[RMDB]
RNA sequence: GGGAACGACUCGAGUAGAGUCGAAAAAUGAGUAUCUUGUAAAGAGGGAUAGGAGAAUUGGAGGGCAAGUUUGGUGCCAGCAGCCGCGGUAAUACCGACUCCAAGAGUGUGUAUGAGAGAUGCUGCAUUAAAAAAACUGGUUCGCCAGUUUUUUUAAAAAAGAAACAACAACAACAAC
Reactivity to DMS in 0.01 (KOAc 150mM, MgCl2 10mM, bicine 150mM(pH8.5), 24C), signal-to-noise 4, nucleotides 027 to 126: a080u030g000a150g010u010a040u000c030u000u020g000u020a090a080a110g010a100g010g000g010a070u010a070g010g020a090g010a050a100u000u010g000g010a090g000g000g010c050a040a060g010u020u020u020g010g010u000g000c060c030a080g010c030a030g010c050c130g020c060g000g000u000a070a070u010a290c030c010g000a100c020u010c030c090a050a080g000a080g010u010g010u010g000u020a050u010g000a130g000a130g000a100u000g000c020u000g020c050a260
Reactivity to 2A3 in 0.01 (KOAc 150mM, MgCl2 10mM, bicine 150mM(pH8.5), 24C), signal-to-noise 2, nucleotides 027 to 126: a030u180g020a020g020u080a080u070c020u090u140g080u130a040a130a040g050a020g070g000g010a040u040a090g070g000a040g020a050a160u080u020g030g000a030g040g040g010c050a130a040g020u040u130u050g040g000u030g040c020c040a010g000c030a010g000c040c020g000c030g000g000u000a010a000u020a070c000c050g010a020c020u020c010c010a040a040g010a030g050u080g010u040g000u030a090u160g060a090g000a000g010a020u050g030c010u010g000c010a030
Conditions: 150 mM KOAc, 10 mM MgCl2 and 150 mM bicine (pH 8.5), 24 C. This 177-nucleotide RNA was probed chemically with DMS and 2A3. The 2A3 profile rests on 809 reads. For DMS the reverse transcriptase was MarathonRT. For 2A3 the reverse transcriptase was SuperScript II with manganese. The DMS profile rests on 7,972 reads.